The record gives the reactivity of an RNA of 177 nucleotides to 2A3 and DMS. Conditions: 150 mM KOAc, 10 mM MgCl2 and 150 mM bicine (pH 8.5), 24 C. Values cover nucleotides 27 to 126.
RNA sequence: GGGAACGACUCGAGUAGAGUCGAAAAUUAGUAGCCAUUUUUUUGUUUAUUCUAAAAGAAUUUACUAUGACGGACAGGUACUAUCACAAUCACUUAAGCCUAUCUCUAGAGCAGUAUUUUGGUCAGACCGUAUAGGGAAAUUCGUUUCCCUAUACGGAAAAGAAACAACAACAACAAC
Reactivity to 2A3 in 0.01 (KOAc 150mM, MgCl2 10mM, bicine 150mM(pH8.5), 24C), signal-to-noise 3, nucleotides 027 to 126: u050u020a010g040u020a020g070c030c010a040u120u100u050u040u030u080u090g010u020u080u040a130u120u000c030u070a100a060a060a040g000a010a000u020u050u030a030c010u040a050u120g050a030c040g010g020a030c030a030g040g000u040a030c020u040a030u080c010a000c010a130a050u040c020a030c100u060u070a040a010g000c000c010u060a050u020c040u000c040u060a050g010a000g050c020a010g020u060a140u040u090u060u050g070g020u040c010a000g030a050
Reactivity to DMS in 0.01 (KOAc 150mM, MgCl2 10mM, bicine 150mM(pH8.5), 24C), signal-to-noise 3, nucleotides 027 to 126: u010u000a060g010u000a070g020c100c070a010u000u000u000u000u010u010u000g000u000u010u010a060u020u000c010u020a080a050a050a170g000a020a020u010u020u000a030c010u010a050u000g000a090c100g010g000a060c130a030g010g020u000a050c060u000a030u000c090a060c100a070a050u010c070a040c070u010u000a090a120g010c030c030u000a060u000c060u010c060u000a100g000a060g000c040a050g010u000a050u000u000u010u000g000g000u010c020a090g000a230